RNA sequence: GGGAACGACUCGAGUAGAGUCGAAAAUUCAUCGACACGAUGGCCGGCUUAGAAGCCGGUGGAACCGCCGAUACGGCCGAUGCGGGUAGCGGCGGAGGCGAACUCGCGGAGGCCGACCUGAGUGACAGGUCAUUAGGAGGUUCGCCUCCUAAUGACCAAAAGAAACAACAACAACAAC
Reactivity to 2A3 in 0.01 (KOAc 150mM, MgCl2 10mM, bicine 150mM(pH8.5), 24C), signal-to-noise 1, nucleotides 027 to 126: u000u010c000a000u020c020g120a080c050a050c300g030a020u050g090g040c010c000g020g040c000u120u150a090g090a300a030g060c020c000g000g000u020g000g030a030a100c020c050g060c040c000g030a000u070a120c020g010g000c010c060g040a030u030g000c020g010g050g070u020a080g240c120g160g030c050g090g020a050g040g100c020g090a160a000c040u000c100g000c030g040g000a000g060g010c030c010g000a000c000c000u030g070a000g070u090g040a020c000a110
Reactivity to DMS in 0.01 (KOAc 150mM, MgCl2 10mM, bicine 150mM(pH8.5), 24C), signal-to-noise 2, nucleotides 027 to 126: u020u000c050a000u020c030g020a120c100a070c100g040a170u000g010g020c020c000g000g000c000u000u010a210g000a170a180g020c020c000g020g010u000g010g010a080a070c150c080g010c020c010g010a030u010a120c060g010g000c010c080g000a300u000g000c010g000g020g010u000a130g000c060g000g020c080g010g000a080g000g000c000g000a050a070c000u000c030g050c020g000g000a300g000g010c020c020g020a030c000c030u000g010a280g000u000g010a150c190a070
Overview
The record gives the reactivity of an RNA of 177 nucleotides to 2A3 and DMS. The data come from the RNA Mapping Database (RMDB), library OK2TST. DMS adducts were read by reverse transcription with MarathonRT. The DMS profile rests on 1,203 reads.